[RMDB]
RNA sequence: GGGAACGACUCGAGUAGAGUCGAAAAAUGAUGAAUCGAAAGAAACAUCUUCGGGUUGUGAGGUUAAGCGACUAAGCGUACACGGUGGAUGCCCUGGCAGUCAGAGGCGAUGAAGGACGUGCUAAUCCUCAUUAGGGGGUUUCGACCCCCUAAUGAGAAAAGAAACAACAACAACAAC
Reactivity to DMS in 0.01 (KOAc 150mM, MgCl2 10mM, bicine 150mM(pH8.5), 24C), signal-to-noise 3, nucleotides 027 to 126: a080u010g030a010u000g010a020a300u000c010g010a120a070a200g000a000a050a300c030a010u000c010u000u000c110g030g020g000u000u000g010u010g000a040g010g030u000u000a060a100g010c070g020a100c110u000a040a120g000c050g010u010a060c100a060c080g010g030u000g000g010a120u000g030c010c040c020u000g010g000c070a060g010u000c050a080g000a070g020g020c080g010a050u010g020a070a050g010g010a040c070g020u010g030c040u010a070a080u010c100

Overview:
The record gives the reactivity of an RNA of 177 nucleotides to DMS.